The record gives the reactivity of an RNA of 177 nucleotides to DMS and 2A3. 2A3 adducts were read by reverse transcription with SuperScript II with manganese.
RNA sequence: GGGAACGACUCGAGUAGAGUCGAAAACAUCAGUCGUUCGCGACUGAUGAAACGUGCAAGCGCUGGACGAAAAAGUCGAUCGAAUACCGAUCGACAAGCGCUAAAGAUAGGCCUUCGGGCCUAUCAACUGUAGAUUUUUGUUCGCAAAAAUCUACAGAAAAGAAACAACAACAACAAC
Reactivity to DMS in 0.01 (KOAc 150mM, MgCl2 10mM, bicine 150mM(pH8.5), 24C), signal-to-noise 3, nucleotides 027 to 126: c010a000u000c010a000g010u000c000g020u000u010c250g030c010g010a010c000u010g000a010u000g000a070a050a070c010g010u000g020c060a100a020g020c000g030c010u000g000g030a030c060g000a070a130a080a060a060g000u000c000g010a000u000c000g010a230a170u010a110c230c000g000a000u000c000g000a010c000a010a000g020c000g000c000u000a030a110a150g000a010u000a000g000g000c000c000u000u010c200g040g010g010c000c000u000a000u000c000a110a180
Reactivity to 2A3 in 0.01 (KOAc 150mM, MgCl2 10mM, bicine 150mM(pH8.5), 24C), signal-to-noise 2, nucleotides 027 to 126: c000a000u000c000a010g010u010c010g030u070u080c180g010c010g080a010c000u020g000a000u010g010a010a010a000c020g000u020g000c030a090a040g020c010g000c030u030g000g050a000c010g220a170a080a030a080a050g000u020c000g010a010u000c000g020a080a030u130a300c160c010g000a000u000c010g010a000c010a000a000g000c000g040c000u030a010a010a000g000a000u010a010g000g010c000c000u030u070c230g060g000g000c000c000u010a000u010c000a010a020

The DMS profile rests on 2,448 reads. Reactivities are given for positions 27 through 126. For DMS the reverse transcriptase was MarathonRT.